[RMDB]
RNA sequence: GGGAACGACUCGAGUAGAGUCGAAAAAGCGGAACCCGGGACAUGAUCGUCGUCGCGGGACUCAGGCUCGGCGGGUCGGGGCGCCUCGCCCCCUUCGGGGUGCCCGUGGUGCCGGAGGUCAGCACGAUCAUGCGGCCGUGCCUGGGGCGUUUGGGCAGCCUAGAUAAACUUUCGAGUUUAUCUAGGCAAAAGAAACAACAACAACAAC
Reactivity to 2A3 in 0.01 (KOAc 150mM, MgCl2 10mM, bicine 150mM(pH8.5), 24C), signal-to-noise 1, nucleotides 027 to 156: a000g030c030g080g020a090a110c010c030c000g000g070g000a080c040a030u090g060a080u160c060g080u070c030g010u090c060g030c030g230g050g030a020c010u010c030a040g000g030c010u010c000g050g000c010g020g000g050u070c070g000g010g010g000c010g050c010c050u130c050g010c000c000c000c000c000u100u190c050g030g010g010g030u050g000c000c000c010g000u010g050g030u060g000c000c020g040g040a030g020g040u020c020a020g010c050a000c010g000a030u020c010a030u180g090c070g060g000c010c010g050u020g010c010c010u000g000g010g020g030c000g020u070u210u070g020g020g010c050a030